[RMDB]
RNA sequence: GGGAACGACUCGAGUAGAGUCGAAAAUGCAUCAUCUUCUUUUAUCUUGAGAAGUUUCUCGAGCUCUCUUUUCAGGCAACCGUUGGCACAUCCUCUAAUGCAACUUUUAAUGCACCCCUCGGAAUCGUAAAGACGGUUCAUUCGUGAACCGUCUUUAAAAAGAAACAACAACAACAAC
Reactivity to 2A3 in 0.01 (KOAc 150mM, MgCl2 10mM, bicine 150mM(pH8.5), 24C), signal-to-noise 2, nucleotides 027 to 126: u040g050c020a070u010c000a030u000c030u050u020c020u060u190u070u140a200u070c040u050u090g010a040g010a020a020g070u030u080u010c060u050c030g000a030g000c010u000c000u000c000u110u130u070u080c070a030g010g000c040a060a020c040c000g050u050u050g080g000c050a030c000a090u010c000c010u090c050u080a190a060u130g000c020a010a030c000u100u040u030u090a050a050u060g000c010a060c000c000c020c000u000c020g070g000a110a090u090c030g010
Reactivity to DMS in 0.01 (KOAc 150mM, MgCl2 10mM, bicine 150mM(pH8.5), 24C), signal-to-noise 2, nucleotides 027 to 126: u030g000c080a050u020c030a150u010c030u000u000c010u000u030u010u040a020u050c040u010u020g000a020g000a070a220g000u010u040u000c010u010c020g000a080g000c050u000c020u040c000u000u010u020u030c040a040g010g010c090a060a040c080c050g030u000u000g000g030c020a030c060a120u010c020c010u000c010u000a050a050u000g010c040a040a000c150u020u030u060u020a070a070u030g010c010a060c000c010c000c030u030c000g000g030a050a070u020c080g000
An RNA of 177 nucleotides, treated with 2A3 and DMS and read out base by base.